An RNA of 177 nucleotides, treated with 2A3 and DMS and read out base by base. Conditions: 150 mM KOAc, 10 mM MgCl2 and 150 mM bicine (pH 8.5), 24 C. The DMS profile rests on 1,751 reads. For 2A3, 1,104 sequencing reads were counted.
RNA sequence: GGGAACGACUCGAGUAGAGUCGAAAACAUAAGUAUUCCAUGCAGUCACGCGAGCGCGGUCCUCGUUGGUCGUAGCGACUUCUUGUUCUGCCAAGCCAUAGUUCACAGUUGAGUCAAACUCAAGACGUCCUUAGCACAACUUCGGUUGUGCUAAGGAAAAAGAAACAACAACAACAAC
Reactivity to 2A3 in 0.01 (KOAc 150mM, MgCl2 10mM, bicine 150mM(pH8.5), 24C), signal-to-noise 1, nucleotides 027 to 126: c030a050u200a140a000g100u150a130u160u000c030c010a010u080g000c020a000g030u060c040a010c030g000c020g030a020g110c020g040c030g030g050u070c010c020u100c040g120u120u160g020g040u000c000g040u010a040g010c000g030a080c000u000u030c010u050u110g030u120u000c010u030g000c010c000a040a000g000c000c010a030u020a060g040u030u070c010a010c030a120g020u010u040g040a000g020u040c090a170a100a130c010u040c060a050a030g040a030c020g030
Reactivity to DMS in 0.01 (KOAc 150mM, MgCl2 10mM, bicine 150mM(pH8.5), 24C), signal-to-noise 3, nucleotides 027 to 126: c060a140u000a090a090g020u000a090u020u010c020c010a140u000g020c070a060g000u000c050a040c090g010c070g000a120g010c050g010c060g000g010u010c040c010u000c100g000u000u000g010g000u010c040g020u000a090g040c050g000a080c040u000u010c020u000u000g020u000u010c010u010g010c020c040a050a090g000c020c010a050u000a070g020u000u010c090a060c070a070g040u000u000g000a050g000u010c100a030a020a300c060u000c040a030a040g020a130c180g020